The data come from the RNA Mapping Database (RMDB), library OK3TST. Structure probing data (DMS and 2A3) for a 207-nucleotide construct. Values cover nucleotides 27 to 156. The DMS profile rests on 2,058 reads.
[RMDB]
RNA sequence: GGGAACGACUCGAGUAGAGUCGAAAAAAAUCUUGCUACCUCCUGCCUGGGAUGUGAACCAUUGUGAAUCAUCCCUUUGUCCAGCAUAUCCACGCUAUAUAGCUACCCAACUUAGUAGCCAUCGUGGCUAUCAGAUCGACAGAUCACAAUAAGGGUGCUCACCUACUAAGUUCGCUUAGUAGGUGAGAAAAGAAACAACAACAACAAC
Reactivity to DMS in 0.01 (KOAc 150mM, MgCl2 10mM, bicine 150mM(pH8.5), 24C), signal-to-noise 1, nucleotides 027 to 156: a070a050a040u010c020u010u000g050c020u000a120c040c010u010c100c020u010g000c040c050u000g010g030g000a060u010g010u020g030a120a160c060c060a100u000u000g020u040g030a210a200u000c070a120u010c030c010c010u020u000u010g020u020c040c010a120g000c080a080u010a000u010c010c000a050c010g010c150u000a180u010a100u000a050g030c000u000a030c010c010c000a060a140c240u000u000a030g030u020a020g010c000c010a030u010c040g070u010g000g030c080u000a030u030c040a060g020a040u030c040g000a070c030a080g020a070u010c060a060c060a030a080u000a060a070g060g050g030u010g010
Reactivity to 2A3 in 0.01 (KOAc 150mM, MgCl2 10mM, bicine 150mM(pH8.5), 24C), signal-to-noise 3, nucleotides 027 to 156: a000a000a000u080c030u020u020g010c030u060a060c000c010u070c000c010u020g090c010c000u050g000g030g000a030u010g040u040g120a090a050c020c030a180u120u130g050u060g070a080a070u080c000a010u020c000c000c000u020u050u020g010u000c000c020a020g040c030a070u000a000u070c010c010a010c010g020c050u010a020u030a020u070a300g030c010u030a030c000c000c050a120a070c100u160u190a060g000u010a000g000c000c010a020u100c060g050u050g040g000c000u000a010u020c010a000g020a100u110c030g040a070c030a110g030a020u030c010a020c010a040a060u180a120a090g040g040g000u070g020